An RNA of 177 nucleotides, treated with DMS and 2A3 and read out base by base.
For 2A3, 447 sequencing reads were counted.
Reactivities are given for positions 27 through 126.
It was measured as part of the RMDB library OK1LIB.
DMS adducts were read by reverse transcription with MarathonRT.
For 2A3 the reverse transcriptase was SuperScript II with manganese.
The reactions ran in a buffer of 150 mM KOAc, 10 mM MgCl2 and 150 mM bicine (pH 8.5), at 24 C.
[RMDB]
RNA sequence: GGGAACGACUCGAGUAGAGUCGAAAAAAAGAUUGGUCAAAUAAGGCAUUGAAAGUGGACUUGACUCCGCAUAAUCCUCUUCGGGUAAGUGAUAAGGCAAGCGCUAUAAUGAAAUUCCCUGAGCGGGGUCUCGUUCUGAUUUCGAUCAGAACGAGACAAAAGAAACAACAACAACAAC
Reactivity to DMS in 0.01 (KOAc 150mM, MgCl2 10mM, bicine 150mM(pH8.5), 24C), signal-to-noise 1, nucleotides 027 to 126: a110a050a020g000a100u030u000g000g040u010c060a070a050a110u040a040a070g000g000c080a020u110u020g030a070a010a000g030u000g020g010a010c060u030u000g020a030c020u000c030c010g030c090a070u000a020a020u000c090c010u000c090u030u000c100g000g000g030u050a010a020g010u000g000a040u000a070a090g000g020c070a110a020g000c130g040c000u030a060u020a110a010u040g020a040a050a140u000u000c020c010c000u030g000a130g020c050g020g000g000
Reactivity to 2A3 in 0.01 (KOAc 150mM, MgCl2 10mM, bicine 150mM(pH8.5), 24C), signal-to-noise 1, nucleotides 027 to 126: a000a000a000g210a050u170u170g080g000u070c020a000a040a120u110a170a000g000g030c100a030u000u070g130a060a000a000g040u040g020g020a060c030u000u060g000a000c030u000c060c030g000c000a130u120a120a110u090c000c000u010c000u160u030c050g020g000g060u010a020a000g030u080g140a230u090a090a090g030g020c010a010a180g000c010g000c010u030a000u000a290a030u140g040a000a030a070u030u020c000c000c000u020g010a000g050c040g000g000g000